[RMDB]
RNA sequence: GGGAACGACUCGAGUAGAGUCGAAAACAGCAGUGCAAAAAGACAGUGCUGAUAAAAAUAAAUUGGAAUUGGCUUUUCGUACCCGAAUUAAAAUUUUCUAUCGGCCAACAGCGUUAAAUAGCAACAGUGGUAUGUGAAUGUUCGCAUUCACAUACCAAAAAGAAACAACAACAACAAC
Reactivity to DMS in 0.01 (KOAc 150mM, MgCl2 10mM, bicine 150mM(pH8.5), 24C), signal-to-noise 1, nucleotides 027 to 126: c120a070g000c120a030g020u000g030c010a050a100a160a150a000g000a110c000a030g040u010g010c030u010g030a070u020a020a090a070a090a040u000a080a040a070u000u020g000g000a070a080u000u000g020g000c030u000u000u000u000c030g030u010a020c000c080c000g010a100a090u000u000a040a070a010a060u000u010u000u020c020u000a030u000c110g000g010c020c030a090a100c140a060g010c040g020u010u000a030a020a130u000a100g000c050a060a050c150a140g000

An RNA of 177 nucleotides, treated with DMS and read out base by base. For DMS, 654 sequencing reads were counted. Source: RMDB library OK2TST, as collected in RNAgym. Conditions: 150 mM KOAc, 10 mM MgCl2 and 150 mM bicine (pH 8.5), 24 C.